Conditions: 150 mM KOAc, 10 mM MgCl2 and 150 mM bicine (pH 8.5), 24 C.
The record gives the reactivity of an RNA of 207 nucleotides to 2A3 and DMS.
It was measured as part of the RMDB library M2RFOK.
In probing experiments dimethyl sulfate is read out at A N1 and C N3, which are open when not base-paired.

[RMDB]
RNA sequence: GGGAACGACUCGAGUAGAGUCGAAAAACAUGCUGGCCAACCCAACCCCACGAUCCUCCAUUGGCAUGAUCAUGAUGUGUUCUCAAAUAUCAGGCCAGUAAAUCACCAUGCUCGUGCUGGUAAAGGCAACUUAUGCCCAAGUUCGCUUGGGCAUAAAGACGGUAUAAUUAUUCGUAAUUAUACCGUCAAAAGAAACAACAACAACAAC
Reactivity to 2A3 in 0.01 (KOAc 150mM, MgCl2 10mM, bicine 150mM(pH8.5), 24C), signal-to-noise 4, nucleotides 027 to 156: a000c060a030u050g010c000u010g000g020c010c000a020a050c050c030c050a070a070c030c030c010c010a050c100g080a190u060c020c020u030c030c030a070u030u090g030g000c020a010u010g010a010u020c000a000u010g040a100u120g030u010g040u060u020c060u010c050a060a080a010u240a080u120c070a040g010g000c000c000a000g020u020a000a030a020u090c000a000c030c000a010u020g010c000u000c020g030u020g000c030u040g000g010u070a160a110a050g030g000c010a050a040c040u030u010a000u000g000c000c000c000a000a010g020u030u020c050g000c110u010u010g050g000g000c000a000u000a000a000a000
Reactivity to DMS in 0.01 (KOAc 150mM, MgCl2 10mM, bicine 150mM(pH8.5), 24C), signal-to-noise 2, nucleotides 027 to 156: a040c040a120u000g000c000u000g010g040c000c040a140a160c100c030c020a180a120c020c030c000c020a040c180g010a180u000c020c000u010c010c030a170u000u000g000g060c030a040u000g010a020u000c030a060u000g020a030u010g010u000g020u010u000c070u000c040a170a120a140u000a100u000c070a100g060g050c000c000a020g020u000a020a060a090u010c030a040c010c010a030u010g020c100u000c030g050u010g010c000u000g010g000u000a040a040a060g040g020c090a020a110c080u010u000a030u000g010c020c000c000a020a050g000u000u000c300g040c000u000u000g020g010g000c000a000u000a010a040a120